Record summary
The record gives the reactivity of an RNA of 207 nucleotides to DMS and 2A3.
[RMDB]
RNA sequence: GGGAACGACUCGAGUAGAGUCGAAAAGACACGGAGCACGAUCGCUCCCGGUCCUUUAUCGCGGUGGCCGGCCGGCGGGCCGACGAGGGUGUGCACGUCGAGGUCGUGGCCUCGCGGUACGGGCUCGGCUGGGUCGUGGACUGGUUCAAGGAGCGCGAUAUAUUGUGCAUUUCGAUGCACAAUAUAUAAAAGAAACAACAACAACAAC
Reactivity to DMS in 0.01 (KOAc 150mM, MgCl2 10mM, bicine 150mM(pH8.5), 24C), signal-to-noise 2, nucleotides 027 to 156: g010a110c030a100c040g010g010a100g030c010a100c030g010a110u010c090g010c010u000c040c010c010g000g000u000c010c020u000u000u000a020u010c040g030c010g000g010u000g040g010c030c020g000g020c010c000g020g010c030g010g010g020c010c020g010a090c010g010a080g030g030g030u000g020u050g000c010a040c020g010u010c020g000a150g040g010u020c070g000u000g020g000c000c000u000c020g020c040g020g020u000a000c140g000g010g000c000u000c010g050g040c010u010g010g010g000u010c000g000u000g000g010a110c040u000g020g010u010u000c050a080a080g000g010a110g030c030g030c080g010
Reactivity to 2A3 in 0.01 (KOAc 150mM, MgCl2 10mM, bicine 150mM(pH8.5), 24C), signal-to-noise 6, nucleotides 027 to 156: g080a000c040a010c130g060g020a060g040c020a010c030g050a080u060c040g040c220u030c000c000c020g000g020u030c000c000u040u080u050a050u020c010g000c020g030g080u150g030g000c010c000g010g000c000c010g000g020c020g010g010g000c040c030g050a080c070g050a170g100g190g030u180g070u210g040c000a000c020g030u050c060g070a160g030g080u080c070g110u150g060g000c000c000u000c000g000c010g000g000u010a040c010g000g000g000c040u050c020g010g010c010u040g010g020g000u020c000g000u000g000g010a010c020u030g040g000u060u080c030a040a030g050g000a050g070c060g000c060g040
DMS adducts were read by reverse transcription with MarathonRT.